The record gives the reactivity of an RNA of 177 nucleotides to 2A3 and DMS. For 2A3, 2,743 sequencing reads were counted. For DMS the reverse transcriptase was MarathonRT.
RNA sequence: GGGAACGACUCGAGUAGAGUCGAAAAGAUGGCUCUAAGGUAUUUGCCGGCUCGCUGUUCGAGUCGACAUGUACGUGGCUUGUCAACGCGUCUAAUGUUGACCACCGUCCUGGCGGCGGGCUUUGCCAACCGGGUGAAAAUUCGUUUUCACCCGGUUAAAAGAAACAACAACAACAAC
Reactivity to 2A3 in 0.01 (KOAc 150mM, MgCl2 10mM, bicine 150mM(pH8.5), 24C), signal-to-noise 2, nucleotides 027 to 126: g050a080u180g060g030c030u030c060u100a050a120g080g000u040a120u040u090u100g010c020c010g070g010c040u040c080g050c060u090g020u170u130c030g000a030g020u000c020g000a000c000a010u010g030u000a000c030g060u000g010g020c070u120u080g070u080c020a030a020c000g000c010g070u050c070u170a160a080u080g000u020u000g010a020c000c000a020c030c020g000u010c010c050u050g090g000c050g000g000c020g000g010g000c000u020u020u060g020c010c000
Reactivity to DMS in 0.01 (KOAc 150mM, MgCl2 10mM, bicine 150mM(pH8.5), 24C), signal-to-noise 4, nucleotides 027 to 126: g000a110u010g010g020c020u010c100u020a110a140g000g000u000a030u000u010u000g010c080c010g010g010c000u000c010g030c240u000g000u000u010c030g010a060g010u000c000g010a020c000a010u000g020u000a010c010g020u000g010g000c050u000u000g000u010c190a080a050c010g000c070g000u010c140u000a150a060u000g010u000u000g000a020c000c070a080c080c020g010u000c020c030u010g000g010c020g010g010c000g000g000g000c020u000u010u000g010c020c050